[RMDB]
RNA sequence: GGGAACGACUCGAGUAGAGUCGAAAAGAUAUGGAGCUAUUAGGACAUGUCCGAGUAUCGGAAACGAUACGAGGACAACAGCCUACUGUAGCUCCUAAGUCAAAAGUAGCUCGUUCGCGAGCUACAACAUUGGAUAAAUCUUCGGAUUUAUCCAAUGAAAAGAAACAACAACAACAAC
Reactivity to DMS in 0.01 (KOAc 150mM, MgCl2 10mM, bicine 150mM(pH8.5), 24C), signal-to-noise 6, nucleotides 027 to 126: g000a020u000a050u010g010g000a020g040c000u010a010u000u000a010g010g010a020c060a300u030g020u000c000c000g000a300g000u000a000u000c000g010g000a020a020a060c000g010a000u000a010c000g000a300g000g000a020c000a020a010c220a130g000c000c000u000a010c300u000g020u000a000g010c000u000c000c000u000a000a040g010u000c020a080a100a120a170g000u000a010g000c000u000c010g010u000u010c260g020c010g020a010g000c000u000a000c000a100a140
Reactivity to 2A3 in 0.01 (KOAc 150mM, MgCl2 10mM, bicine 150mM(pH8.5), 24C), signal-to-noise 3, nucleotides 027 to 126: g000a010u010a020u090g010g010a000g000c010u000a000u040u040a020g020g030a050c190a270u300g030u000c010c000g010a040g000u000a010u000c010g020g000a000a000a020c010g000a000u000a020c000g000a000g000g020a000c000a010a000c010a010g000c000c010u050a090c140u050g010u030a010g000c000u000c000c000u010a000a000g010u000c010a020a010a080a190g010u000a000g000c000u010c010g030u070u080c300g030c010g130a000g000c000u000a000c000a010a000